[RMDB]
RNA sequence: GGGAACGACUCGAGUAGAGUCGAAAAGUCCCCAGUAUGACGUUAAACUGCUGACUCAUACAUACUGACACCGGUUGCUCAACAGGCUGUGUGGGACAAUAGAAUAACAAGGCUGUUAAUUUGAGCUAAAACUCCUCGGGGUUCGCCCCGAGGAGAACUCAGACAGUACGUUCGCGUACUGUCUGAGAAAAGAAACAACAACAACAAC
Reactivity to 2A3 in 0.01 (KOAc 150mM, MgCl2 10mM, bicine 150mM(pH8.5), 24C), signal-to-noise 1, nucleotides 027 to 156: g060u040c000c020c020c000a020g000u050a040u110g010a010c040g020u070u030a040a150a050c040u150g000c020u030g040a000c010u010c040a000u030a040c000a040u080a060c040u050g090a020c000a070c150c060g150g000u060u090g000c010u010c020a040a060c010a010g090g000c010u030g020u000g020u030g040g040g030a000c010a020a110u160a040g120a060a070u150a070a020c040a000a010g150g050c070u030g020u090u050a040a120u110u070u140g040a010g000c010u020a040a040a090a110c010u000c000c000u000c000g030g010g000g000u020u060c150g090c020c000c010c000g000a000g000g000a000g000a000a000